The record gives the reactivity of an RNA of 207 nucleotides to DMS and 2A3. Reactivities are given for positions 27 through 156.
RNA sequence: GGGAACGACUCGAGUAGAGUCGAAAAAGAUUCUCCUGAAUUUAGAUCAACUCAGAUGCACAAAGGUGAAAAAUUCCAGGUAUGUUUUCACAUGAUUUUUAAGGAGAUUGAAACUAGUUUGCAUCUCAUUCAGAAUCCAAAGGAUAUUAAUAGAAAACCAUAAAUGAUACUUCGGUAUCAUUUAUGGAAAAGAAACAACAACAACAAC
Reactivity to DMS in 0.01 (KOAc 150mM, MgCl2 10mM, bicine 150mM(pH8.5), 24C), signal-to-noise 1, nucleotides 027 to 156: a160g000a160u010u010c010u030c040c060u020g010a100a050u000u000u010a150g040a110u000c030a160a090c100u000c000a110g010a080u000g000c030a080c090a070a140a110g000g010u000g010a030a110a090a060a130u000u010c130c090a120g050g000u000a030u000g000u000u000u000u000c030a050c020a110u000g010a060u000u000u000u000u000a090a110g030g000a020g010a050u000u040g010a140a090a050c020u000a120g000u000u000u000g030c000a050u000c010u060c010a030u010u000c070a080g010a040a110u000c010c050a030a040a040g010g000a130u000a060u000u000a060a050u000a120g010a120a120a130a190
Reactivity to 2A3 in 0.01 (KOAc 150mM, MgCl2 10mM, bicine 150mM(pH8.5), 24C), signal-to-noise 2, nucleotides 027 to 156: a010g070a110u050u030c020u010c030c010u010g060a090a070u050u110u120a100g000a130u140c010a000a070c070u040c140a000g000a040u020g030c020a000c030a060a060a090g060g020u000g000a080a000a000a050a050u090u030c060c010a000g040g030u070a040u110g050u040u060u140u110c010a010c010a020u050g070a050u090u060u140u210u250a040a050g030g020a030g010a040u020u090g030a110a080a010c000u000a010g040u020u050u090g010c000a020u000c020u020c000a000u050u000c010a020g080a110a050u030c030c020a120a070a050g010g000a020u040a040u220u170a110a010u080a150g130a050a110a020a050